Structure probing data (2A3 and DMS) for a 207-nucleotide construct. 2A3 adducts were read by reverse transcription with SuperScript II with manganese. It was measured as part of the RMDB library VIROID. DMS adducts were read by reverse transcription with MarathonRT. Values cover nucleotides 27 to 156. For 2A3, 2,075 sequencing reads were counted. The RNA was probed in 150 mM KOAc, 10 mM MgCl2 and 150 mM bicine (pH 8.5) at 24 C.

RNA sequence: GGGAACGACUCGAGUAGAGUCGAAAAUUCCCUCCCCUGGCGUUUCUUCCUCGAUUCGGCCCGGCUCAUCUCGACAAGAGGCGGCGAUCCUCAGUGCUCUUACUCUUUUCUGUAAAGAGGAGACUGCUGGAUCCGCCGCCCAAGUUCGAGCAUGAGCGCUAAACACAUUCUUCGGAAUGUGUUUAGCAAAAGAAACAACAACAACAAC
Reactivity to 2A3 in 0.01 (KOAc 150mM, MgCl2 10mM, bicine 150mM(pH8.5), 24C), signal-to-noise 3, nucleotides 027 to 156: u040u010c000c000c000u020c020c000c010c030u040g070g040c030g020u130u050u000c020u140u120c020c030u040c040g010a020u030u040c020g090g020c000c000c040g060g000c000u000c000a000u000c000u000c000g000a010c010a100a120g110a130g060g000c010g010g000c000g000a000u000c010c010u010c010a040g030u150g240c060u010c030u110u220a270c000u040c000u030u100u140u080c160u260g300u300a040a010a000g000a000g010g000a000g010a000c010u020g070c050u010g000g000a000u000c020c100g010c000c010g000c010c000c000a000a000g010u040u030c000g000a000g010c030a000u010g000a000g000c000
Reactivity to DMS in 0.01 (KOAc 150mM, MgCl2 10mM, bicine 150mM(pH8.5), 24C), signal-to-noise 1, nucleotides 027 to 156: u000u000c010c020c010u020c070c000c010c060u000g000g030c080g000u000u000u000c010u000u020c020c050u030c020g010a130u000u000c030g040g000c040c010c040g000g000c010u000c050a040u010c010u010c010g010a060c040a300a260g020a200g000g000c000g020g040c030g010a080u030c010c010u010c020a050g020u000g000c110u000c000u000u010a300c020u010c020u000u000u000u000c210u030g000u010a030a010a030g010a020g020g010a050g020a050c010u000g020c150u010g000g040a040u010c130c060g050c010c010g000c020c010c000a010a110g010u010u000c000g010a050g020c090a030u000g000a030g060c070